[RMDB]
RNA sequence: GGGAACGACUCGAGUAGAGUCGAAAACUAAUGAUGCAAACGUGCUGCUUGACAUAGAAAACACCUACAUAAAGGGCAUACUUUAUUGUGAUUCGCCUCUUAAUAAGUUGAAGUGUCAGCAACAGAGCUUCUUUAUGGAAGAUGGUUUUUACCCUUCAUGUAAUGAUCCUUUCGAGGAUCAUUACAUAAAAGAAACAACAACAACAAC
Reactivity to 2A3 in 0.01 (KOAc 150mM, MgCl2 10mM, bicine 150mM(pH8.5), 24C), signal-to-noise 9, nucleotides 027 to 156: c030u060a070a090u160g100a040u110g040c070a120a120a090c080g110u080g030c040u020g000c040u100u210g010a010c010a010u060a030g100a030a080a020a010c030a030c030c070u160a070c060a080u120a040a080a020g020g050g020c020a040u070a100c030u100u180u180a170u280u200g040u040g070a100u080u050c040g020c020c000u110c010u130u110a120a080u120a260a040g020u030u020g080a080a020g010u000g010u010c010a000g010c000a010a010c010a010g060a010g020c000u060u020c000u050u210u100a130u170g050g010a030a030g040a070u080g010g040u040u030u020u040u160a100c010c010c000u020u090c040
Reactivity to DMS in 0.01 (KOAc 150mM, MgCl2 10mM, bicine 150mM(pH8.5), 24C), signal-to-noise 4, nucleotides 027 to 156: c040u010a070a110u010g010a130u010g030c060a080a090a120c130g020u000g030c020u010g020c010u000u010g020a140c040a130u000a100g000a120a110a110a150c040a080c030c000u000a050c060a090u010a020a030a040g000g000g030c050a150u000a040c040u000u000u010a080u050u020g020u010g000a220u010u000c090g010c020c010u000c010u000u010a060a110u010a050a080g010u000u010g010a130a170g030u000g010u000c050a110g020c000a010a020c020a030g010a160g020c010u000u000c020u000u000u000a050u010g010g010a090a040g000a070u010g030g010u000u010u000u010u020a080c070c000c010u010u000c050